Source information: An RNA of 207 nucleotides, treated with DMS and 2A3 and read out base by base. The RNA was probed in 150 mM KOAc, 10 mM MgCl2 and 150 mM bicine (pH 8.5) at 24 C. DMS (dimethyl sulfate) methylates the pairing face of unpaired adenines and cytosines.

[RMDB]
RNA sequence: GGGAACGACUCGAGUAGAGUCGAAAAUCAUUGAGAUGCUGGGCGCUAUGGUCGUCCUCCUCCGGCUGACCUCCUUCUCAGCUGCUGACCGGCGCCGCACAGGCGGCAUCUCAGCUUCGUGUGCACAAAAAGAAUGGUCGGUUCGCCGACCAUUCAACGUUGUAAGUAUCUUCGGAUACUUACAACGAAAAGAAACAACAACAACAAC
Reactivity to DMS in 0.01 (KOAc 150mM, MgCl2 10mM, bicine 150mM(pH8.5), 24C), signal-to-noise 3, nucleotides 027 to 156: u010c100a130u010u000g020a030g000a010u000g010c000u000g000g030g000c010g010c030u000a040u010g060g020u000c000g020u000c070c040u000c040c030u000c020c020g000g040c000u010g000a020c070c110u010c140c110u020u020c060u000c010a040g020c010u000g010c060u020g010a010c020c020g000g020c010g040c020c020g010c050a110c090a130g050g050c030g020g010c010a020u000c010u000c010a050g000c090u010u010c110g020u000g000u000g000c040a120c130a060a080a130a140a190g000a040a020u000g010g000u000c010g020g000u000u000c300g030c020c010g000a020c000c000a010u010u000c000a040a100
Reactivity to 2A3 in 0.01 (KOAc 150mM, MgCl2 10mM, bicine 150mM(pH8.5), 24C), signal-to-noise 3, nucleotides 027 to 156: u110c030a030u070u110g000a000g000a000u010g000c000u070g040g010g000c020g030c050u110a160u300g050g000u010c020g050u080c030c040u030c000c000u020c000c000g010g020c010u000g000a110c120c040u150c020c020u250u070c040u000c020a000g000c000u030g040c070u120g000a010c020c000g010g010c000g000c000c000g000c020a050c010a020g150g000c000g000g000c000a000u000c000u000c000a010g010c030u120u150c060g130u070g060u110g070c050a010c040a120a050a050a040a040g000a000a000u000g000g000u010c000g040g000u030u050c160g040c040c010g000a000c000c000a000u000u000c000a000a000
Source information:
For DMS, 9,815 sequencing reads were counted.